[RMDB]
RNA sequence: GGGAACGACUCGAGUAGAGUCGAAAAGCCAAGGUAAAAGUGUAUUAAGAUGGAAAGGGAAACUAGGACCAUGACGUGGUUUUUGUAAGAAUGCUAGCAGGGUACACACAAGAAGAGUAAUUGCACUCAUGAUAGGGAGGUUCGCCUCCCUAUCAUGAAAAGAAACAACAACAACAAC
Reactivity to 2A3 in 0.01 (KOAc 150mM, MgCl2 10mM, bicine 150mM(pH8.5), 24C), signal-to-noise 3, nucleotides 027 to 126: g030c000c000a050a060g020g050u190a140a110a030a020g020u050g010u020a070u040u100a110a060g030a050u110g030g070a070a060a050g090g010g020a090a070a000c020u060a030g040g040a060c020c000a050u090g070a040c070g080u060g010g000u010u020u060u000u120g040u000a030a080g100a110a020u070g000c030u050a050g020c030a010g020g020g000u040a030c010a000c010a020c030a210a000g070a060a030g010a020g030u050a170a070u130u070g040c050a030c050u000
Reactivity to DMS in 0.01 (KOAc 150mM, MgCl2 10mM, bicine 150mM(pH8.5), 24C), signal-to-noise 3, nucleotides 027 to 126: g050c000c010a110a070g020g010u010a050a070a110a070g030u010g030u020a030u020u000a080a100g000a040u000g010g000a060a070a070g020g000g010a080a060a120c070u010a090g010g000a050c030c030a040u010g000a110c120g010u000g000g010u010u000u000u000u010g020u030a060a040g010a060a070u020g010c040u000a070g010c000a020g010g000g050u030a030c090a060c110a060c140a050a080g000a060a030g000a060g010u020a030a070u010u000g020c120a070c110u000